[RMDB]
RNA sequence: GGGAACGACUCGAGUAGAGUCGAAAAGCAGCCAGGUUGGCGCGGAACGGCGCGGUGCUUAUGACAUUCACAUGGUCAUCUUGCCGGCGAAGGUACUGGAAGAAAGAGGCGUCGAAAGGACGACUCCCCCGUAUUGGAUGUUCGCAUCCAAUACGGGAAAAGAAACAACAACAACAAC
Reactivity to 2A3 in 0.01 (KOAc 150mM, MgCl2 10mM, bicine 150mM(pH8.5), 24C), signal-to-noise 2, nucleotides 027 to 126: g010c030a020g050c020c000a040g010g090u160u140g080g000c040g000c040g030g070a140a010c020g040g020c020g030c010g040g010u080g010c010u090u050a040u060g020a030c010a090u040u150c070a110c000a150u160g000g000u040c000a000u020c030u040u060g040c010c000g000g030c030g030a050a010g130g010u050a110c030u060g030g040a050a000g030a040a210a030g040a020g000g040c000g010u010c000g000a210a190a020g200g000a000c000g010a020c040u000c000c010
Reactivity to DMS in 0.01 (KOAc 150mM, MgCl2 10mM, bicine 150mM(pH8.5), 24C), signal-to-noise 3, nucleotides 027 to 126: g010c060a090g010c030c020a090g030g020u000u020g010g040c050g030c050g010g010a110a160c060g010g000c030g040c110g000g020u000g010c040u010u000a020u000g000a070c090a070u000u000c190a120c150a060u000g000g000u000c020a040u000c060u000u000g030c020c000g020g010c060g000a080a070g000g020u000a030c050u000g000g020a100a090g010a050a080a080g010a040g000g000c040g030u010c010g000a070a080a110g000g020a060c020g000a040c010u010c010c150